[RMDB]
The record gives the reactivity of an RNA of 207 nucleotides to 2A3.
2A3 adducts were read by reverse transcription with SuperScript II with manganese.
RNA sequence: GGGAACGACUCGAGUAGAGUCGAAAAUUCAGUUUCAGGCUCUUUCAAGUACUGCUGCUAUAAACAUGCCUUUAGGAAAACAUAAGUUUGCAUUCUGUAGGUUAUAUGCCUUGGAGUGGAAUUGCUGGGACAUAGGCUGUGCAUGUACCCCAUUUCAGCGCAUAACUGAGUUCGCUCAGUUAUGCGCAAAAGAAACAACAACAACAAC
Reactivity to 2A3 in 0.01 (KOAc 150mM, MgCl2 10mM, bicine 150mM(pH8.5), 24C), signal-to-noise 1, nucleotides 027 to 156: u010u030c030a010g020u050u070u020c060a060g000g000c000u060c000u100u200u170c060a020a000g070u070a070c000u020g020c010u000g030c000u000a030u040a120a180a030c060a010u070g010c030c000u120u110u190a220g150g000a010a060a200a090c020a030u080a000a110g010u040u060u190g020c000a000u150u100c060u290g230u090a010g010g000u030u110a220u020a040u300g020c000c000u030u030g000g000a000g000u000g000g110a150a130u010u110g000c060u010g020g010g000a010c010a040u060a010g010g000c010u030g080u020g040c010a000u050g030u150a200c000c000c000c000a010u000u090u170c060a000